Source: RMDB library OK1LIB, as collected in RNAgym. This 177-nucleotide RNA was probed chemically with 2A3 and DMS. The reactions ran in a buffer of 150 mM KOAc, 10 mM MgCl2 and 150 mM bicine (pH 8.5), at 24 C. Values are in units of 0.01, from 0 to 300, in steps of 10. For DMS the reverse transcriptase was MarathonRT. The DMS profile rests on 6,938 reads. The 2A3 profile rests on 712 reads.
[RMDB]
RNA sequence: GGGAACGACUCGAGUAGAGUCGAAAACAGCUAGCGGUAAUCGAAAUUGGGGACUAAAUUUCGCAAAAGCGGGUCGCACGAUAUCAGAAGAGUAUAAUGUCCCUUUAUUAAUGAAGUUUGAGUUACAUAUGACAUCUCUUUUCGAAGAGAUGUCAUAAAAAGAAACAACAACAACAAC
Reactivity to 2A3 in 0.01 (KOAc 150mM, MgCl2 10mM, bicine 150mM(pH8.5), 24C), signal-to-noise 2, nucleotides 027 to 126: c040a030g090c000u100a010g020c000g060g060u130a010a010u250c010g100a040a030a040u130u110g000g000g000g070a000c020u080a080a020a100u100u070u130c060g030c100a000a100a200a020g090c190g040g010g000u040c000g030c080a010c040g020a000u050a020u150c080a020g110a140a040g040a070g100u090a080u070a190a050u070g010u080c000c000c000u020u080u010a190u030u060a050a130u140g080a170a070g000u020u140u150g040a040g000u000u120a000c020a080
Reactivity to DMS in 0.01 (KOAc 150mM, MgCl2 10mM, bicine 150mM(pH8.5), 24C), signal-to-noise 4, nucleotides 027 to 126: c070a080g010c030u000a090g010c010g030g010u040a060a050u000c050g000a010a030a060u030u020g020g000g010g000a100c050u040a050a060a060u000u000u000c030g020c130a070a040a120a120g010c040g000g000g020u020c040g000c090a090c050g000a050u010a040u030c100a080g000a140a090g030a090g000u020a020u030a040a130u020g000u010c000c010c000u010u010u030a020u010u030a060a080u030g030a090a190g000u000u000u010g000a300g000u000u010a030c120a170